Conditions: 150 mM KOAc, 10 mM MgCl2 and 150 mM bicine (pH 8.5), 24 C. Structure probing data (DMS and 2A3) for a 177-nucleotide construct. The 2A3 profile rests on 2,995 reads. For DMS, 3,996 sequencing reads were counted. The data come from the RNA Mapping Database (RMDB), library OK2TST. Values cover nucleotides 27 to 126.
RNA sequence: GGGAACGACUCGAGUAGAGUCGAAAAAUCCAGUUGCCAGUCGGAAUGCUGCUUCGGUAUGCGAGCGUAAGAUCGCUUCAGCCUGGUGCAUUCGGAGCGCCGUUUCAGGACUCGUAUGGUGAUGGGAGGGACUAAUUACUUUCGAGUAAUUAGUCCCAAAAGAAACAACAACAACAAC
Reactivity to DMS in 0.01 (KOAc 150mM, MgCl2 10mM, bicine 150mM(pH8.5), 24C), signal-to-noise 3, nucleotides 027 to 126: a100u010c030c000a170g010u000u000g020c000c010a040g000u010c080g020g010a050a020u000g020c030u010g040c020u000u000c300g020g000u000a040u010g030c150g010a020g000c010g000u000a140a120g000a140u000c020g020c010u000u010c060a080g010c010c010u000g010g010u000g010c000a020u000u000c010g000g000a020g000c100g010c040c030g000u000u000u000c180a110g020g000a040c020u000c070g000u000a140u000g010g020u000g020a040u000g010g000g010a160
Reactivity to 2A3 in 0.01 (KOAc 150mM, MgCl2 10mM, bicine 150mM(pH8.5), 24C), signal-to-noise 3, nucleotides 027 to 126: a000u020c030c000a070g070u050u070g000c010c000a010g060u090c060g190g020a020a010u020g010c040u050g010c020u090u050c060g020g010u140a260u120g050c110g020a010g000c010g020u080a240a090g080a300u230c020g000c000u020u030c010a020g020c000c010u040g000g020u020g030c010a010u000u030c020g040g020a030g020c280g020c030c000g030u060u200u200c120a070g000g030a020c000u010c050g040u070a110u060g010g010u030g030a020u040g030g020g030a120